RNA sequence: GGGAACGACUCGAGUAGAGUCGAAAAACUAUUUACUGAAAUCUUGGCCAUUUAGGGAUGAGUAUCUUCCACUGACCUACUUUGAUGCGAUAUACAUCAUCGACCUAUGUGAACCCCUUUUGGAAGUAGCAAGGGCCAGAAUCAAGGCAAGGGGAUGACCACAAGUAGCAUUCGUGCUACUUGUGGUAAAAGAAACAACAACAACAAC
Reactivity to 2A3 in 0.01 (KOAc 150mM, MgCl2 10mM, bicine 150mM(pH8.5), 24C), signal-to-noise 4, nucleotides 027 to 156: a000c110u130a180u140u150u180a100c040u070g080a050a060a090u020c040u080u120g000g000c010c020a140u120u100u160a020g000g030g010a020u040g010a010g040u030a050u020c070u040u020c020c030a050c060u080g120a160c000c040u120a130c070u180u100u120g080a110u080g030c040g050a020u030a010u060a100c050a120u040c000a000u000c010g070a210c000c000u040a070u100g020u010g030a030a030c010c000c020c050u030u040u110u300g050g000a060a010g020u040a020g040c010a020a040g030g010g000c010c000a020g000a030a050u120c070a060a010g000g060c030a020a050g010g030g010g030a020u100g060
Reactivity to DMS in 0.01 (KOAc 150mM, MgCl2 10mM, bicine 150mM(pH8.5), 24C), signal-to-noise 2, nucleotides 027 to 156: a140c070u000a050u000u010u020a100c020u010g000a110a040a050u000c040u000u010g020g060c010c020a170u010u010u010a070g000g000g010a040u000g020a120g010u000a060u010c040u000u000c020c010a080c050u000g000a110c040c010u010a080c090u000u000u000g030a040u010g010c030g030a110u000a100u010a060c030a040u010c030a020u000c030g010a080c030c000u000a140u020g030u000g000a100a100c150c010c030c070u000u000u000u000g020g000a000a030g000u000a080g010c020a060a300g010g020g020c000c010a070g000a080a070u000c040a080a210g010g030c030a040a080g000g020g060g020a100u010g000